The data come from the RNA Mapping Database (RMDB), library M2PK50. The record gives the reactivity of an RNA of 177 nucleotides to DMS and 2A3. Values cover nucleotides 27 to 126.
[RMDB]
RNA sequence: GGGAACGACUCGAGUAGAGUCGAAAAGCCUUACGAUUCGUCGUAAGGCAUACUAAGUUUUGGCACUAUGAGCCCGCAGCGUUGGUGCUCCCACGCGGUGCAAUACGACGGAUUUCGAUCCGUCGAAAGGUUAAUUGGUUUUCGAACCAAUUAACCUAAAAGAAACAACAACAACAAC
Reactivity to DMS in 0.01 (KOAc 150mM, MgCl2 10mM, bicine 150mM(pH8.5), 24C), signal-to-noise 4, nucleotides 027 to 126: g010c000c000u000u010a000c000g010a000u000u010c190g020u000c000g010u000a000a010g000g010c000a000u000a010c100u000a080a120g010u000u000u010u000g010g010c010a040c070u010a130u000g000a150g010c010c010c030g020c070a150g010c080g000u000u000g020g010u010g000c160u000c040c030c020a060c080g010c040g010g020u000g000c070a060a090u010a150c010g010a010c010g000g000a020u000u000u010c160g000a020u000c000c010g030u000c010g000a010a060
Reactivity to 2A3 in 0.01 (KOAc 150mM, MgCl2 10mM, bicine 150mM(pH8.5), 24C), signal-to-noise 4, nucleotides 027 to 126: g000c010c000u000u000a000c000g010a010u000u050c170g040u010c000g000u130a010a000g000g010c000a000u020a000c030u090a080a190g020u010u060u200u200g080g020c030a020c050u100a080u300g110a020g040c000c000c020g000c030a070g030c030g080u150u140g050g030u160g060c050u090c000c010c000a030c020g040c020g030g040u040g030c030a030a060u140a100c020g000a000c000g000g000a020u040u050u080c150g090a010u000c000c000g000u000c000g000a030a020